[RMDB]
RNA sequence: GGGAACGACUCGAGUAGAGUCGAAAAAUAUUGUUACCAUGAAGAUAGUUUUCCUCAAUGGACUUCAAAUUGCAUCUAGAAUUAGUGGAGCUUUUGUAUCUUCUGCAGACACUGUGGGUAGCCCAUCGACGUACAACACGUUCGCGUGUUGUACGUCAAAAGAAACAACAACAACAAC
Reactivity to 2A3 in 0.01 (KOAc 150mM, MgCl2 10mM, bicine 150mM(pH8.5), 24C), signal-to-noise 1, nucleotides 027 to 126: a020u110a050u020u050g030u020u040a060c010c030a070u150g020a000a000g020a060u060a100g050u050u000u160u020c020c000u080c040a100a120u150g100g000a090c050u030u070c040a020a070a150u100u020g020c030a070u040c040u070a060g110a240a180u160u090a120g100u090g160g000a000g000c020u040u040u080u120g040u000a060u020c000u050u000c020u000g000c010a000g040a080c020a020c090u010g020u050g050g020g000u060a010g020c040c000c010a070u070c060
Reactivity to DMS in 0.01 (KOAc 150mM, MgCl2 10mM, bicine 150mM(pH8.5), 24C), signal-to-noise 1, nucleotides 027 to 126: a030u000a050u000u000g000u000u000a090c120c040a100u000g000a080a070g000a030u000a000g010u000u000u000u000c020c000u000c170a080a090u020g000g000a110c030u000u000c020a040a080a070u000u000g040c090a050u000c080u000a060g010a110a130u000u000a060g010u000g000g000a050g000c070u010u010u000u000g000u000a010u000c000u000u000c040u000g020c060a090g000a160c060a030c060u000g040u000g000g020g000u010a170g000c010c070c020a140u010c100

Chemical mapping of a 177-nucleotide RNA with 2A3 and DMS. Reactivities are rounded to 0.1 and cut off at 0 and 3. The reactions ran in a buffer of 150 mM KOAc, 10 mM MgCl2 and 150 mM bicine (pH 8.5), at 24 C. For DMS the reverse transcriptase was MarathonRT. It was measured as part of the RMDB library OK2TST. For DMS, 892 sequencing reads were counted. For 2A3, 661 sequencing reads were counted.